An RNA of 207 nucleotides, treated with 2A3 and DMS and read out base by base.
2A3 adducts were read by reverse transcription with SuperScript II with manganese.
Source: RMDB library OK3TST, as collected in RNAgym.
For DMS the reverse transcriptase was MarathonRT.
RNA sequence: GGGAACGACUCGAGUAGAGUCGAAAACAGGAGUUAAUGAUGCUAUUACUCAAACUUCACAAGCUAUACAAACAGUUGCCACUGCACUUAAUAAGAUUCAGGAUGUUGUGAAUCAACAAGGCAAUGCAUUGAACCAUCUAACUUCUCAGUUGAGGCAAUGACACGUAUAUUUCGAUAUACGUGUCAUAAAAGAAACAACAACAACAAC
Reactivity to 2A3 in 0.01 (KOAc 150mM, MgCl2 10mM, bicine 150mM(pH8.5), 24C), signal-to-noise 9, nucleotides 027 to 156: c040a020g030g040a010g020u040u070a110a090u140g040a030u070g040c060u120a110u200u130a130c030u060c030a090a100a090c070u160u130c100a070c050a140a060g020c060u150a070u070a240c090a050a130a010c030a060g040u050u040g020c010c010a050c040u040g010c050a050c110u070u090a110a030u110a270a050g030a050u070u060c010a010g090g050a160u130g050u140u040g030u040g060a010a040u140c000a010a050c030a050a030g020g010c000a020a040u090g010c020a030u020u080g030a030a010c020c000a010u010c000u030a020a040c010u060u020c040u020c050a040g010u040u050g060a040g050g010c050a050
Reactivity to DMS in 0.01 (KOAc 150mM, MgCl2 10mM, bicine 150mM(pH8.5), 24C), signal-to-noise 4, nucleotides 027 to 156: c050a090g020g030a070g020u010u000a070a100u000g020a080u010g020c040u000a130u010u010a080c070u010c040a120a080a090c080u010u010c030a080c070a110a140g000c040u010a110u000a100c080a100a070a110c050a100g010u000u000g010c060c030a170c080u010g010c050a080c050u010u000a060a130u010a080a130g010a100u000u000c050a080g010g000a140u000g030u000u010g010u010g000a050a090u000c030a060a090c090a040a100g020g000c030a030a060u000g010c040a140u010u000g010a040a080c060c000a060u000c060u000a020a040c040u000u010c010u000c050a090g020u000u000g010a050g010g040c080a110